[RMDB]
RNA sequence: GGGAACGACUCGAGUAGAGUCGAAAAAGGAGCUUUUAAGAGCACAGGAUGAUGCAGAUUUUAAGCUCAUGUACGAGCAGCUUGUGCCAGUGCUCUACCGCGUAGCGUACAACGUGGUGCGCGAGGAACUAGUCGGCGGAUUCGUCCGCCGACUAGUAAAAGAAACAACAACAACAAC
Reactivity to 2A3 in 0.01 (KOAc 150mM, MgCl2 10mM, bicine 150mM(pH8.5), 24C), signal-to-noise 2, nucleotides 027 to 126: a010g070g000a010g000c000u040u010u000u000a070a050g070a010g020c000a000c000a000g040g020a040u200g050a080u150g070c110a080g130a260u160u180u020u150a000a000g000c000u000c000a020u080g080u160a010c090g000a000g000c000a000g010c040u010u040g000u020g100c020c000a020g010u050g030c020u000c000u000a060c020c000g000c020g000u020a000g050c030g010u010a000c020a050a050c120g020u090g050g060u050g000c000g000c000g000a070g030g030a010
Reactivity to DMS in 0.01 (KOAc 150mM, MgCl2 10mM, bicine 150mM(pH8.5), 24C), signal-to-noise 1, nucleotides 027 to 126: a140g000g000a080g030c030u030u020u000u000a120a070g000a080g040c000a010c000a010g000g000a080u030g000a130u000g040c030a090g060a300u000u000u110u000a150a170g000c000u000c000a120u030g000u060a110c250g000a000g000c020a220g000c060u000u080g000u000g000c000c070a020g020u000g000c010u000c000u020a120c070c020g070c060g000u030a090g000c040g000u050a000c070a080a080c060g060u000g000g090u000g000c050g050c060g000a110g030g000a000